The record gives the reactivity of an RNA of 207 nucleotides to DMS and 2A3.
The RNA was probed in 150 mM KOAc, 10 mM MgCl2 and 150 mM bicine (pH 8.5) at 24 C.
2A3 adducts were read by reverse transcription with SuperScript II with manganese.
Values cover nucleotides 27 to 156.
RNA sequence: GGGAACGACUCGAGUAGAGUCGAAAAACGCUUCACAAUGUGCGGCAAAGAAACAUUGUUUAUGCAAAGGCACUUCGCAAUGUGCGCUCAAACAUUGCUUAUUCAAACACGCUUCACAAUGUGCGACAAAACUUCACGGUCUUCGGACCGUGAAGAACGCAUUCAAUCUGUUCGCAGAUUGAAUGCGAAAAGAAACAACAACAACAAC
Reactivity to DMS in 0.01 (KOAc 150mM, MgCl2 10mM, bicine 150mM(pH8.5), 24C), signal-to-noise 2, nucleotides 027 to 156: a020c010g010c030u000u050c030a070c030a090a010u000g070u000g020c010g000g000c080a140a160a150g050a040a040a030c010a000u000u000g000u000u000u000a110u000g040c020a160a060a100g040g010c010a030c030u000u000c190g000c140a120a100u000g060u010g000c010g010c020u000c140a060a140a110c030a010u000u000g010c000u000u020a100u000u000c060a140a210a120c050a100c030g020c080u000u000c060a080c060a080a070u030g020u000g010c050g000a120c120a020a060a090a100c010u000u000c010a010c010g020g030u010c000u000u030c300g050g000a030c000c010g030u010g020a000a030g000a000a130
Reactivity to 2A3 in 0.01 (KOAc 150mM, MgCl2 10mM, bicine 150mM(pH8.5), 24C), signal-to-noise 6, nucleotides 027 to 156: a000c020g010c040u070u050c020a000c000a010a060u020g000u020g010c000g030g000c080a070a050a100g070a020a080a010c010a010u010u020g090u050u060u080a080u100g050c060a060a090a050g110g000c010a020c050u090u120c150g040c080a070a080u060g010u000g040c040g050c060u080c080a040a070a010c000a020u020u010g000c010u110u110a120u170u110c060a010a080a030c060a020c130g020c010u080u060c010a010c020a120a140u080g010u030g040c000g040a050c050a010a100a040a030c000u000u000c000a000c000g010g010u000c010u030u040c120g090g010a000c000c000g000u000g000a000a000g000a000a000